RNA sequence: GGGAACGACUCGAGUAGAGUCGAAAAUAAGCAAAAGACAACCACCUUUCUCGCUGACAAUAGCGUUAUCCCUCUGCACUUCGGUAAUAUGAGGGCACAGUAAAUCCCGCAAGGAUGAGAAUGUGAUUAAACAGUUACAGCUUCGGCUGUAACUGAAGAUCCCCAAUUAGUUCGCUAAUUGGGGAUCAAAAGAAACAACAACAACAAC
Reactivity to DMS in 0.01 (KOAc 150mM, MgCl2 10mM, bicine 150mM(pH8.5), 24C), signal-to-noise 2, nucleotides 027 to 156: u000a070a120g020c050a040a060a100a040g020a120c050a080a080c010c040a100c040c010u010u010u010c040u000c020g020c020u000g010a150c130a050a100u010a060g040c050g020u000u010a110u010c010c000c000u000c050u010g000c110a080c040u010u010c200g100g090u000a010a200u020a100u010g000a010g040g010g000c090a050c040a120g010u020a020a100a110u000c010c000c030g010c150a110a180g010g000a020u010g130a070g000a070a130u010g000u010g040a170u010u000a080a090a180c000a030g020u010u000a000c010a000g050c000u000u010c300g090g020c000u000g000u000a000a010c000u020g020a010a040
Reactivity to 2A3 in 0.01 (KOAc 150mM, MgCl2 10mM, bicine 150mM(pH8.5), 24C), signal-to-noise 4, nucleotides 027 to 156: u120a000a030g040c040a020a030a080a060g100a120c070a070a050c050c020a070c040c040u020u150u080c080u030c030g020c030u040g070a100c080a190a190u090a120g020c020g020u040u050a100u090c010c000c000u000c000u030g000c050a020c050u090u110c170g070g000u050a030a020u110a090u300g000a000g000g020g000c000a000c000a000g020u020a000a030a030u000c020c010c000g120c120a040a010g030g010a010u020g000a010g030a010a030u020g000u010g020a030u060u200a100a080a040c000a010g000u000u000a000c000a000g000c000u070u060c160g060g000c000u000g000u000a000a000c000u000g000a010a000
Structure probing data (DMS and 2A3) for a 207-nucleotide construct.
For 2A3, 2,433 sequencing reads were counted.
For DMS, 2,409 sequencing reads were counted.
For 2A3 the reverse transcriptase was SuperScript II with manganese.
High 2A3 reactivity points to a flexible backbone, as in loops and unpaired stretches.
Source: RMDB library M2RFPK, as collected in RNAgym.
The RNA was probed in 150 mM KOAc, 10 mM MgCl2 and 150 mM bicine (pH 8.5) at 24 C.